RNA sequence: GGGAACGACUCGAGUAGAGUCGAAAAACUGAGAUAUGGACUUCGGCUGAUAUUAGUCUGCGAAAUCGUAUGACUUUGAACCUACGAUUGUCACGGCCCGAAGACCAUAAGCUUUAUUAGCGAACCAACAAGUUAUACUAUUCGUAGUAUAACUUGUAAAAGAAACAACAACAACAAC
Reactivity to DMS in 0.01 (KOAc 150mM, MgCl2 10mM, bicine 150mM(pH8.5), 24C), signal-to-noise 9, nucleotides 027 to 126: a090c120u000g000a030g010a100u000a010u000g000g010a140c010u000u000c010g010g010c300u010g010a140u010a100u010u010a090g020u010c010u010g040c040g000a040a020a010u000c000g010u000a000u010g020a030c060u010u010u010g010a130a120c080c020u000a010c010g000a010u000u000g010u000c010a040c020g000g000c050c000c010g010a020a010g010a070c010c000a010u000a010a100g000c020u000u000u000a080u010u000a070g020c080g010a110a190c050c050a140
Reactivity to 2A3 in 0.01 (KOAc 150mM, MgCl2 10mM, bicine 150mM(pH8.5), 24C), signal-to-noise 9, nucleotides 027 to 126: a010c050u050g010a020g010a050u030a010u040g010g000a010c000u000u000c000g020g000c050u100g110a030u020a100u300u160a060g060u050c040u060g010c020g030a040a020a020u030c000g000u010a030u170g050a070c040u150u130u250g070a060a030c000c000u010a010c020g020a020u000u050g120u110c000a010c030g020g000c030c020c010g000a000a000g010a010c000c000a000u010a020a010g000c000u100u090u030a130u070u070a080g050c030g050a040a040c020c010a010